[RMDB]
RNA sequence: GGGAACGACUCGAGUAGAGUCGAAAAGUCAGCUAUCCAGGCCAGCAUGAUGCCUUGGAUGGUGUUACACUGUUGGAAGAGCAAACGCUGACCUUCUUGAGGUCUGGCUUCAAGCACUGUUUUGGUGAGCAUAACUGCGAUUCGUCGCAGUUAUGCUAAAAGAAACAACAACAACAAC
Reactivity to DMS in 0.01 (KOAc 150mM, MgCl2 10mM, bicine 150mM(pH8.5), 24C), signal-to-noise 2, nucleotides 027 to 126: g000u000c170a170g000c000u000a030u000c010c040a030g000g030c040c080a120g060c150a060u030g020a230u000g020c060c010u020u020g020g000a000u000g010g000u000g000u010u000a120c120a080c020u010g000u000u000g000g000a060a110g010a080g000c020a080a060a110c220g050c040u000g020a000c010c020u000u000c150u000u040g010a020g000g040u020c030u000g010g000c000u020u000c070a090a210g000c050a070c100u010g010u000u000u000u000g010g010u020g000
Reactivity to 2A3 in 0.01 (KOAc 150mM, MgCl2 10mM, bicine 150mM(pH8.5), 24C), signal-to-noise 1, nucleotides 027 to 126: g070u010c030a020g010c000u000a000u010c000c000a000g010g000c020c000a010g190c100a130u300g100a060u080g020c060c000u120u180g000g000a000u000g000g000u040g000u040u040a000c000a000c000u030g090u000u080g050g010a160a030g000a000g070c000a060a000a050c130g030c070u020g000a010c010c000u190u150c060u150u300g010a000g010g000u020c020u050g000g080c000u030u030c150a070a080g010c090a080c130u000g010u000u000u010u070g060g030u020g130

Source: RMDB libraries RFM100 and RFMREP, as collected in RNAgym. This 177-nucleotide RNA was probed chemically with DMS and 2A3. For 2A3 the reverse transcriptase was SuperScript II with manganese. Conditions: 150 mM KOAc, 10 mM MgCl2 and 150 mM bicine (pH 8.5), 24 C.